[RMDB]
Record summary:
An RNA of 177 nucleotides, treated with 2A3 and DMS and read out base by base. Source: RMDB library RFMREP, as collected in RNAgym. For DMS the reverse transcriptase was MarathonRT. The 2A3 profile rests on 8,501 reads.
RNA sequence: GGGAACGACUCGAGUAGAGUCGAAAACGGACCGAUCCAUGCUCCGUCACCGCCCGCAGAGGCCCGCCUUGGCCAUGGGCUCGGAGGCCAGUGACCAAACAAGAUGGACCGUUCGCGGUCCAUCUUGGUCUAUCAUAACGUUCGCGUUAUGAUAGACAAAAGAAACAACAACAACAAC
Reactivity to 2A3 in 0.01 (KOAc 150mM, MgCl2 10mM, bicine 150mM(pH8.5), 24C), signal-to-noise 3, nucleotides 027 to 126: c020g010g020a020c020c030g020a040u050c050c020a060u080g030c020u020c020c010g030u030c030a050c060c050g030c020c010c010g000c080a060g060a170g140g010c020c000c020g080c030c040u080u130g030g000c030c030a070u060g010g000g000c050u040c040g080g020a040g040g010c020c000a040g030u030g050a040c040c010a050a060a050c000a000a000g000a010u010g000g010a000c000c000g020u030u060c210g000c010g060g000u010c000c000a000u000c000u000u000g000
Reactivity to DMS in 0.01 (KOAc 150mM, MgCl2 10mM, bicine 150mM(pH8.5), 24C), signal-to-noise 5, nucleotides 027 to 126: c060g010g000a080c060c040g010a070u010c080c080a100u010g010c100u000c030c030g000u000c060a120c080c180g010c040c000c020g000c130a090g000a110g000g010c030c020c090g020c080c080u000u000g000g010c060c070a090u000g000g000g000c020u000c090g020g010a240g000g010c030c040a060g010u000g000a150c030c030a070a090a300c010a010a000g000a010u000g000g000a010c000c010g020u000u010c210g020c010g020g000u000c000c000a000u000c000u000u000g000